[RMDB]
RNA sequence: GGGAACGACUCGAGUAGAGUCGAAAACGGCCAAUCGUUCGAAAGGAUUGAUUUGGCAUCAGGUUAAUGGCCUCGAGUAUCGUAAUAACCGUGAAGAUUGGGUAAUCCGCAGCCAAGUGCUAAACAAGUAUUGGUAAACUCUACUUGCAUGCUAAUGGACUCUAGCAGGGUUCGCCCUGCUAGAGUCAAAAGAAACAACAACAACAAC
Reactivity to 2A3 in 0.01 (KOAc 150mM, MgCl2 10mM, bicine 150mM(pH8.5), 24C), signal-to-noise 1, nucleotides 027 to 156: c080g030g000c000c000a020a000u010c010g000u050u000c010g040a050a040a030g050g000a060u180u220g000a000u100u210u070g010g000c000a030u090c040a050g050g060u010u090a040a000u240g010g040c000c000u010c000g000a000g000u070a100u060c020g000u010a000a130u060a050a210c030c000g010u020g030a090a040g000a030u050u050g030g000g000u040a010a030u000c000c010g000c000a000g000c010c000a170a040g030u070g100c090u210a120a000a020c010a000a000g010u060a030u100u130g010g030u120a050a080a060c000u000c000u000a030c000u000u000g000c000a010u250g000c010u030a040a020u140g090